[RMDB]
RNA sequence: GGGAACGACUCGAGUAGAGUCGAAAAGGUCAUAGGCUGUGCGAUUACGGUGAUAAAGUACCUGGUAGUACAGUCGUAUCCGCCACAUUGCGAGGUACUUGGGCGGCACGACAUCUCGCUUUGCAUACAUAUCACGGCAGUUCGCUGCCGUGAUAUGAAAAGAAACAACAACAACAAC
Reactivity to 2A3 in 0.01 (KOAc 150mM, MgCl2 10mM, bicine 150mM(pH8.5), 24C), signal-to-noise 2, nucleotides 027 to 126: g040g020u110c040a040u080a070g000g040c000u010g020u010g000c010g020a040u050u090a040c130g000g040u030g040a140u120a290a200a030g050u060a040c000c020u030g050g010u010a010g030u030a000c010a000g010u000c000g000u010a000u000c010c030g020c040c010a080c020a040u010u090g010c010g030a060g040g030u040a060c020u100u080g040g000g050c010g000g030c050a010c050g080a020c010a040u020c010u000c010g010c090u050u040u050g020c000a030u060a220
Reactivity to DMS in 0.01 (KOAc 150mM, MgCl2 10mM, bicine 150mM(pH8.5), 24C), signal-to-noise 3, nucleotides 027 to 126: g020g000u010c130a090u000a060g010g000c010u000g030u010g000c000g020a050u010u000a070c200g020g000u010g000a150u010a060a120a090g010u010a030c020c000u000g000g020u000a050g010u020a030c050a030g000u000c010g000u000a070u000c030c040g000c060c030a180c060a040u000u000g000c050g020a030g030g000u000a040c130u020u010g010g020g020c030g020g000c100a050c090g000a050c140a030u020c020u000c020g020c040u000u000u000g010c150a130u020a150